[RMDB]
RNA sequence: GGGAACGACUCGAGUAGAGUCGAAAAGAUAUGGAUCAUAUACCUCACAAGUGCCAUCGGAAACGAUGGGCACUGAGGUAUGAUCCUAAGUCAAAAGAUCAUCGUACUGUUCGCAGUACGAUGAUCACAGGGCUAGUUAGUUCGCUAACUAGCCCUGAAAAGAAACAACAACAACAAC
Reactivity to DMS in 0.01 (KOAc 150mM, MgCl2 10mM, bicine 150mM(pH8.5), 24C), signal-to-noise 3, nucleotides 027 to 126: g010a050u000a300u010g000g010a030u000c000a020u010a150u000a060c010c000u000c020a210c300a300a100g050u000g010c000c000a010u000c010g000g010a110a090a160c000g020a010u000g010g010g030c010a010c010u010g000a020g000g020u000a000u020g020a020u020c000c000u010a030a090g010u000c010a120a080a100a120g000a000u000c000a010u000c000g010u000a000c000u000g010u020u020c260g010c000a000g010u010a020c010g010a000u010g010a010u000c000a070
Reactivity to 2A3 in 0.01 (KOAc 150mM, MgCl2 10mM, bicine 150mM(pH8.5), 24C), signal-to-noise 3, nucleotides 027 to 126: g040a010u060a050u110g010g000a000u010c030a010u210a000u100a240c000c000u060c020a160c060a300a000g000u000g030c010c000a020u000c000g050g000a070a070a060c010g010a020u010g060g020g020c010a000c000u020g000a000g000g000u000a010u010g000a000u000c010c000u000a110a020g070u010c050a000a000a060a260g000a010u000c000a000u000c000g030u020a000c000u020g080u110u150c300g000c230a000g000u000a000c000g000a000u000g000a000u000c000a010
Chemical mapping of a 177-nucleotide RNA with DMS and 2A3. For 2A3, 6,438 sequencing reads were counted. The RNA was probed in 150 mM KOAc, 10 mM MgCl2 and 150 mM bicine (pH 8.5) at 24 C. As a SHAPE reagent, 2A3 marks flexible, mostly unpaired nucleotides at the ribose 2'-OH.